[RMDB]
Chemical mapping of a 207-nucleotide RNA with DMS and 2A3. The reactions ran in a buffer of 150 mM KOAc, 10 mM MgCl2 and 150 mM bicine (pH 8.5), at 24 C. Source: RMDB library OK3TST, as collected in RNAgym. For DMS, 3,688 sequencing reads were counted. Values cover nucleotides 27 to 156. The 2A3 profile rests on 4,692 reads. For 2A3 the reverse transcriptase was SuperScript II with manganese.
RNA sequence: GGGAACGACUCGAGUAGAGUCGAAAAAUAUAGCCAAAACAAUCCUAAGCCAAAAGAACAAAGCUGGAGGCAUCACGCUACCUGACUUCAUACUAUACUACAAGGCUACAGUAACAAAAACAGCGUGCUACUGGUACCAAAACAGACAUGUAGACCAAGUUAUCCCUAAGUUCGCUUAGGGAUAACUAAAAGAAACAACAACAACAAC
Reactivity to DMS in 0.01 (KOAc 150mM, MgCl2 10mM, bicine 150mM(pH8.5), 24C), signal-to-noise 2, nucleotides 027 to 156: a090u000a080u000a120g010c020c040a070a090a080a100c040a120a120u000c000c030u000a070a140g010c040c060a040a070a060a100g010a100a120c050a030a040a100g010c030u000g010g020a110g030g000c020a030u010c070a080c040g020c010u010a030c170c010u000g020a040c060u000u000c040a110u000a040c040u000a070u000a050c070u000a090c070a050a040g010g010c000u010a060c010a040g010u000a020a070c010a000a070a060a070a090c070a080g020c070g020u010g010c030u000a030c030u000g000g000u010a110c040c050a040a060a050a050c020a120g010a050c080a060u000g000u000a100g000a080c030c020a040
Reactivity to 2A3 in 0.01 (KOAc 150mM, MgCl2 10mM, bicine 150mM(pH8.5), 24C), signal-to-noise 6, nucleotides 027 to 156: a000u100a000u090a040g040c020c010a030a060a040a030c040a050a060u060c020c010u110a090a040g030c020c010a050a080a030a020g060a080a100c080a150a130a000g030c020u040g050g000a010g030g000c010a000u030c010a000c020g010c020u040a030c000c010u030g090a100c010u060u030c050a050u060a160c030u120a050u030a150c050u030a070c030a070a020g010g000c010u030a020c010a030g050u070a100a040c060a090a070a040a030a020c030a020g030c030g060u020g010c010u040a060c010u020g040g010u040a060c040c050a000a050a050a060c030a020g060a030c010a030u090g040u080a020g040a040c050c010a030